An RNA of 207 nucleotides, treated with 2A3 and read out base by base.
RNA sequence: GGGAACGACUCGAGUAGAGUCGAAAAGGUGAAAGCGAAUCGGGGAAGAUAAGCUAGCAGCAUAAAGGAACCGAUUCCCACCAAGUUCGGAAAGAGAUACCGGGCGAGGCGCUGAAGAAAGAAUCUCAAACUCCCGCAAGUUUCGACUUGCGGGAAACUCAAGAAGAGACUUCGGUCUCUUCUUGAGAAAAGAAACAACAACAACAAC
Reactivity to 2A3 in 0.01 (KOAc 150mM, MgCl2 10mM, bicine 150mM(pH8.5), 24C), signal-to-noise 2, nucleotides 027 to 156: g000g000u040g020a280a020a030g030c040g000a010a000u010c010g030g010g000g060a030a050g050a160u080a120a010g030c030u090a030g050c080a000g000c010a010u140a160a190a050g120g010a050a010c000c000g010a020u000u020c000c000c000a000c000c000a080a000g000u020u000c010g010g000a080a100a060g060a040g000a010u020a060c020c020g010g000g010c020g010a010g030g040c050g000c070u060g020a020a020g000a030a090a000g060a070a050u020c010u020c050a090a120a110c030u000c010c020c010g000c000a020a010g020u050u130u300c230g080a020c000u000u000g000c000g000g010g020a000a000a000
2A3 adducts were read by reverse transcription with SuperScript II with manganese. The RNA was probed in 150 mM KOAc, 10 mM MgCl2 and 150 mM bicine (pH 8.5) at 24 C.